The record gives the reactivity of an RNA of 177 nucleotides to 2A3. Conditions: 150 mM KOAc, 10 mM MgCl2 and 150 mM bicine (pH 8.5), 24 C. 2A3 adducts were read by reverse transcription with SuperScript II with manganese. Values are in units of 0.01, from 0 to 300, in steps of 10. High 2A3 reactivity points to a flexible backbone, as in loops and unpaired stretches. For 2A3, 497 sequencing reads were counted.
RNA sequence: GGGAACGACUCGAGUAGAGUCGAAAAAUCAAAUCCUUUGGAUUAUUCUGAAUGUGUGUCUGACAAAUAACUCGCAUUUUGAUGGUAGUAUUUGUUCAUUUUAAAACAGUUUAUUUUCCAUAAUAUAUCACGGCACCAUAUUCGUAUGGUGCCGUGAAAAAGAAACAACAACAACAAC
Reactivity to 2A3 in 0.01 (KOAc 150mM, MgCl2 10mM, bicine 150mM(pH8.5), 24C), signal-to-noise 2, nucleotides 027 to 126: a010u160c280a070a010a030u080c070c000u070u030u040g030g000a030u010u010a090u300u000c000u020g140a200a180u030g020u100g000u040g090u200c150u100g020a020c000a020a020a010u000a000a000c000u020c000g160c020a030u150u130u050u130g250a160u000g000g030u150a020g000u060a010u000u000u000g000u040u110c030a020u000u120u180u180a000a000a000a030c000a000g000u130u000u000a040u040u180u020u000c010c000a050u080a090a140u110a060u000a000